An RNA of 177 nucleotides, treated with 2A3 and DMS and read out base by base. The DMS profile rests on 1,396 reads. The 2A3 profile rests on 1,860 reads. It was measured as part of the RMDB library OK2TRN.
RNA sequence: GGGAACGACUCGAGUAGAGUCGAAAACAGGGGCACUGUUAUCGGGAGAACACAUGUCGCUACUCCCAUAACCCCUACAAGCUGUCUGGGGGGGAUUUGGUGCGAGGCAUCGCUCUGGGCCUCCAGAGCGAGUACCUUCGUUCGCGAAGGUACUCGCAAAAGAAACAACAACAACAAC
Reactivity to 2A3 in 0.01 (KOAc 150mM, MgCl2 10mM, bicine 150mM(pH8.5), 24C), signal-to-noise 2, nucleotides 027 to 126: c070a020g010g000g080g000c070a060c150u080g050u070u020a030u100c120g010g030g010a040g040a130a010c040a000c040a170u220g100u270c010g030c100u090a070c020u030c030c020c000a010u010a010a060c010c000c000c010u050a050c010a040a030g060c070u120g020u160c020u040g000g000g000g000g030g000g030a070u150u110u170g110g000u020g010c020g020a020g050g080c050a080u030c040g000c010u030c030u030g010g090g050c000c020u040c010c010a010g000a000
Reactivity to DMS in 0.01 (KOAc 150mM, MgCl2 10mM, bicine 150mM(pH8.5), 24C), signal-to-noise 2, nucleotides 027 to 126: c140a100g000g000g000g030c300a060c120u010g000u000u000a040u010c160g030g000g010a090g020a100a070c240a060c090a090u010g030u000c130g010c050u000a160c060u000c000c010c000a080u000a050a100c010c040c000c020u000a100c210a050a100g000c120u000g020u000c030u010g000g000g020g000g000g020g010a130u000u010u010g010g000u010g020c050g000a070g010g000c230a150u010c060g010c000u000c010u000g000g000g010c090c130u000c000c000a050g010a040